An RNA of 177 nucleotides, treated with 2A3 and DMS and read out base by base. The DMS profile rests on 3,988 reads. For 2A3, 3,627 sequencing reads were counted. DMS adducts were read by reverse transcription with MarathonRT.

RNA sequence: GGGAACGACUCGAGUAGAGUCGAAAAGUGUCGGACAGCCGAUAGCCUUGCGGCCAGGGAUCGUCCGGGUCGAGCAGGUACUGGUGGAUGCCGGUGAUCCAGGCCCGCCCGGACAGGCACGGGAGGACUCCAGGAGGAUAUUCGUAUCCUCCUGGAGAAAAGAAACAACAACAACAAC
Reactivity to 2A3 in 0.01 (KOAc 150mM, MgCl2 10mM, bicine 150mM(pH8.5), 24C), signal-to-noise 1, nucleotides 027 to 126: g050u030g030u000c000g000g040a120c080a120g200c080c000g020a030u020a070g040c020c000u010u110g110c050g020g000c030c000a110g090g060g120a120u140c120g010u000c000c010g010g030g040u230c050g000a020g050c020a010g000g020u060a080c010u010g000g080u050g200g130a120u300g040c000c020g010g020u020g030a040u050c020c000a050g120g000c000c000c000g010c020c000c000g000g010a000c000a000g000g000c040a020c010g000g000g010a010g040g000a060
Reactivity to DMS in 0.01 (KOAc 150mM, MgCl2 10mM, bicine 150mM(pH8.5), 24C), signal-to-noise 3, nucleotides 027 to 126: g020u010g010u010c010g020g000a170c260a160g030c010c010g020a080u010a080g020c030c020u000u000g010c050g010g000c000c030a130g000g010g010a080u000c130g000u010c000c000g010g000g020u000c030g010a060g010c010a090g010g020u000a020c010u000g020g010u000g030g010a090u010g020c000c000g000g010u000g000a060u010c020c020a180g040g000c020c000c050g000c010c020c010g000g000a030c010a040g010g020c030a090c030g000g000g000a060g020g020a290